The record gives the reactivity of an RNA of 177 nucleotides to 2A3 and DMS. Values are in units of 0.01, from 0 to 300, in steps of 10. The data come from the RNA Mapping Database (RMDB), library OK2TST. 2A3 adducts were read by reverse transcription with SuperScript II with manganese. The DMS profile rests on 3,443 reads.
[RMDB]
RNA sequence: GGGAACGACUCGAGUAGAGUCGAAAAUCGAAAAGGCUUUAUCUGAACUCGGCGGGCCUAGUUGCGUCGUGAUACUGACAGGUGGAAGUAGCGCUCUACCGGGCAUAGAGAAAAGGCUUAGGCUCACUACGAAAGUGAGAUUCGUCUCACUUUCGUAAAAAGAAACAACAACAACAAC
Reactivity to 2A3 in 0.01 (KOAc 150mM, MgCl2 10mM, bicine 150mM(pH8.5), 24C), signal-to-noise 1, nucleotides 027 to 126: u060c010g010a030a100a010a020g060g000c050u090u060u070a080u030c030u050g070a050a030c020u010c020g000g000c030g010g010g020c000c040u040a060g180u060u060g070c020g030u010c040g060u090g110a110u130a210c080u150g120a050c020a100g020g020u020g060g010a040a050g030u020a010g000c050g010c060u000c000u070a170c020c030g010g000g020c030a070u100a000g070a000g000a050a060a000a030g060g000c020u010u030a030g020g050c010u020c030a040c070
Reactivity to DMS in 0.01 (KOAc 150mM, MgCl2 10mM, bicine 150mM(pH8.5), 24C), signal-to-noise 4, nucleotides 027 to 126: u020c120g000a060a080a110a050g010g010c040u010u000u000a130u020c030u010g020a120a180c020u000c020g000g040c300g010g000g000c020c020u010a020g010u000u000g040c060g040u000c030g010u020g020a180u000a060c190u010g000a070c080a110g010g000u000g020g010a050a040g000u000a050g010c170g010c080u000c010u000a060c000c010g020g020g000c120a080u010a090g000a080g000a090a050a030a050g010g000c020u000u010a060g000g020c050u000c050a140c130